This 170-nucleotide RNA was probed chemically with 2A3 and DMS.
2A3 adducts were read by reverse transcription with SuperScript II with manganese.
For DMS the reverse transcriptase was MarathonRT.
RNA sequence: GGGAACGACUCGAGUAGAGUCGAAAAGAGAAAUUCGUAAGUCUCUUUGCUACUUUAAUGACUUUUUCUGGUAAUGUAGAUCUUGAUGCGUUAGCUAGUGAUAUUUUUGACACUCCUAGCGUACUUCCACGUUAGUGGUUCGCCACUAACAAAAGAAACAACAACAACAAC
Reactivity to 2A3 in 0.01 (KOAc 150mM, MgCl2 10mM, bicine 150mM(pH8.5), 24C), signal-to-noise 9, nucleotides 027 to 129: g030a000g010a010a040a020u210u130c090g040u210a080a040g030u010c000u000c000u020u020u030g020c010u010a050c000u050u080u170a140a110u190g130a090c040u110u120u070u150u090c080u140g080g020u090a070a060u080g020u030a020g010a080u030c040u050u140g050a060u050g010c000g000u020u010a010g010c080u010a010g010u010g080a100u050a200u180u160u070u110u190g050a030c010a000c010u000c000c000u000a000g000c000g000u010a030c030u060u020c030c030a070c080
Reactivity to DMS in 0.01 (KOAc 150mM, MgCl2 10mM, bicine 150mM(pH8.5), 24C), signal-to-noise 9, nucleotides 027 to 129: g010a020g010a000a000a000u020u010c260g000u060a120a110g030u000c000u000c100u020u000u010g000c010u000a060c030u010u010u030a110a090u000g050a110c220u040u040u040u020u050c080u050g020g000u000a070a070u030g000u000a000g000a050u000c020u000u030g030a000u010g020c050g020u030u020a040g000c100u020a030g050u000g020a090u030a080u040u040u030u050u050g010a110c050a040c060u010c300c010u000a030g000c000g010u020a010c090u040u050c020c100a090c190

The RNA was probed in 150 mM KOAc, 10 mM MgCl2 and 150 mM bicine (pH 8.5) at 24 C.